Chemical mapping of a 207-nucleotide RNA with 2A3.
The 2A3 profile rests on 829 reads.
It was measured as part of the RMDB library M2RFOK.
Conditions: 150 mM KOAc, 10 mM MgCl2 and 150 mM bicine (pH 8.5), 24 C.
[RMDB]
RNA sequence: GGGAACGACUCGAGUAGAGUCGAAAAUGGGCUACCAGUAAGCGAAGAAUGAUACAGGACGAAAAAAACAUAAUUCGAGAUUUUUCAGGAUGGAUUUUUUUAGGUAUCUAUCAAAACUAUUCUGAUGCAACGUAGAGCACGUUCGCGUGCUCUACAACUUGUGUAUUGCCUUCGGGCAAUACACAAGAAAAGAAACAACAACAACAAC
Reactivity to 2A3 in 0.01 (KOAc 150mM, MgCl2 10mM, bicine 150mM(pH8.5), 24C), signal-to-noise 1, nucleotides 027 to 156: u070g000g010g000c010u010a040c000c010a040g040u060a050a010g040c020g040a030a040g020a030a070u150g040a030u090a070c060a090g030g080a040c040g000a050a010a000a000a020a040a040c090a040u080a100a040u110u050c010g030a000g000a270u070u240u050u090u090c020a000g010g010a000u000g010g040a040u000u000u010u000u030u000u080a040g040g020u130a070u180c010u000a010u030c010a000a030a000a000c000u000a000u060u010c000u000g030a040u070g060c010a000a070c110g000u000a000g020a000g000c010a000c010g000u020u050c140g010c010g080u000g000c000u010c000u000a000c000a010a000